Notes
Chemical mapping of a 177-nucleotide RNA with 2A3 and DMS. The 2A3 profile rests on 1,653 reads. For DMS the reverse transcriptase was MarathonRT. Reactivities are rounded to 0.1 and cut off at 0 and 3. DMS (dimethyl sulfate) methylates the pairing face of unpaired adenines and cytosines. For DMS, 1,245 sequencing reads were counted. The data come from the RNA Mapping Database (RMDB), library M2PK90.
RNA sequence: GGGAACGACUCGAGUAGAGUCGAAAAAUACAGUACGAAAGUACAAAGAAGCAAUCAAACCGAGCAGUGAAAUGAUGGCUUCAGUCCAAAAUCGGCAAACACUGCAGACGGAGCCAAAGGCAAAUAACCUAUGGUACUGGUUCGCCAGUACCAUAGGAAAAGAAACAACAACAACAAC
Reactivity to 2A3 in 0.01 (KOAc 150mM, MgCl2 10mM, bicine 150mM(pH8.5), 24C), signal-to-noise 2, nucleotides 027 to 126: a010u130a050c040a010g010u010a020c010g040a110a030a010g020u010a010c020a040a070a010g030a040a000g020c020a010a040u030c030a030a090a080c010c040g020a020g000c010a000g010u050g060a060a140a130u100g030a020u020g010g000c000u070u020c060a060g040u070c000c010a040a110a020a140u080c060g040g000c020a030a060a000c020a020c050u040g050c020a010g080a060c070g030g000a000g000c000c000a060a110a030g040g000c000a060a080a000u090a060a080
Reactivity to DMS in 0.01 (KOAc 150mM, MgCl2 10mM, bicine 150mM(pH8.5), 24C), signal-to-noise 2, nucleotides 027 to 126: a100u030a070c160a110g000u000a030c040g000a210a060a090g000u000a010c010a040a140a140g000a030a030g020c030a080a000u020c010a040a110a130c040c000g000a100g020c020a040g000u020g010a110a080a060u000g000a040u000g020g000c010u000u000c010a080g000u010c000c050a000a050a090a090u040c030g020g010c100a070a170a090c010a050c040u000g020c040a100g000a040c050g000g000a140g030c030c040a080a080a030g010g000c040a030a040a040u000a070a110